[RMDB]
RNA sequence: GGGAACGACUCGAGUAGAGUCGAAAACGGAUUCAAACGAUUCUCCUGCCUGAGCCUCCGGAGUAGCUGGGAUUACAGGCAUGCGCCACCAAGACAGGCUAGUUUUGUAGUUUUAGUAGAGGCGGGGAUGCACCGAAUGUUUCGACAUUCGGUGCAUAAAAGAAACAACAACAACAAC
Reactivity to DMS in 0.01 (KOAc 150mM, MgCl2 10mM, bicine 150mM(pH8.5), 24C), signal-to-noise 2, nucleotides 027 to 126: c130g000g000a080u010u020c140a080a070a090c120g000a070u000u000c020u010c040c020u000g000c050c030u000g000a110g020c010c010u000c020c240g000g000a130g030u000a080g020c050u000g000g000g000a040u000u000a020c060a030g110g000c060a030u010g010c080g010c010c000a080c120c090a110a100g010a130c190a070g010g000c070u010a090g010u000u000u000u010g020u020a060g010u000u000u000u000a040g020u000a060g000a070g030g010c020g020g000g000g010

Source: RMDB library OK2TRN, as collected in RNAgym. Structure probing data (DMS) for a 177-nucleotide construct. The DMS profile rests on 1,260 reads.